[RMDB]
RNA sequence: GGGAACGACUCGAGUAGAGUCGAAAAAGCGUAGCGGUACGCCGCUACGCAAGGCGCAUUUGAACUGUAUUGUACGCCUUGCAUAAAGCAAAAGUACUAAAAAAACGUGCCGUUACGACGGCACUAAAAAACAUCCAUUGGUUCGCCAAUGGAUGAAGUCACUACGUUAGUUCGCUAACGUAGUGACAAAAGAAACAACAACAACAAC
Reactivity to 2A3 in 0.01 (KOAc 150mM, MgCl2 10mM, bicine 150mM(pH8.5), 24C), signal-to-noise 4, nucleotides 027 to 156: a000g030c010g020u000a000g010c010g000g010u030a010c240g040c010c000g000c010u000a000c010g000c000a000a000g010g000c010g000c020a060u090u120u250g140a220a070c110u120g030u160a120u100u100g010u040a040c020g020c000c000u000u010g000c030a080u100a170a180a000g030c010a030a010a000a040g050u040a040c120u230a030a100a050a000a000a000a030c050g000u000g010c010c000g010u010u060a050c210g020a000c000g050g000c000a000c000u000a000a000a000a000a010a020c000a000u000c000c000a000u000u010g020g000u030u030c090g010c100c000a000a000u000g000g000a000u000g000a010a000

About this RNA: Chemical mapping of a 207-nucleotide RNA with 2A3. 2A3 adducts were read by reverse transcription with SuperScript II with manganese. Source: RMDB library M2RFPK, as collected in RNAgym.